[RMDB]
RNA sequence: GGGAACGACUCGAGUAGAGUCGAAAACAAGCAUUGCGUAUGCUUGCUAGUGCUGCCAUUGAUAUUUCUGAUGGGUUAAUUUCUGAUCUGCAGCACAUUCUGAAAGCCAGCCAUUGUGGUGCUCGUACCACUAGCGGGCUUUCGAGCCCGCUAGUGGAAAAGAAACAACAACAACAAC
Reactivity to DMS in 0.01 (KOAc 150mM, MgCl2 10mM, bicine 150mM(pH8.5), 24C), signal-to-noise 1, nucleotides 027 to 126: c010a010a050g000c000a000u000u000g040c190g040u000a070u000g000c000u000u000g010c100u000a080g030u000g000c010u000g020c010c300a100u020u010g050a030u000a030u000u000u020c030u000g010a210u020g020g020g010u000u000a050a040u000u000u020c040u000g000a070u000c110u000g000c020a030g010c010a000c020a150u010u000c210u000g020a050a050a020g000c030c060a030g010c040c070a080u000u000g020u000g000g010u000g000c110u010c170g020u000a110

This 177-nucleotide RNA was probed chemically with DMS. For DMS the reverse transcriptase was MarathonRT. Source: RMDB library OK2TRN, as collected in RNAgym. The reactions ran in a buffer of 150 mM KOAc, 10 mM MgCl2 and 150 mM bicine (pH 8.5), at 24 C.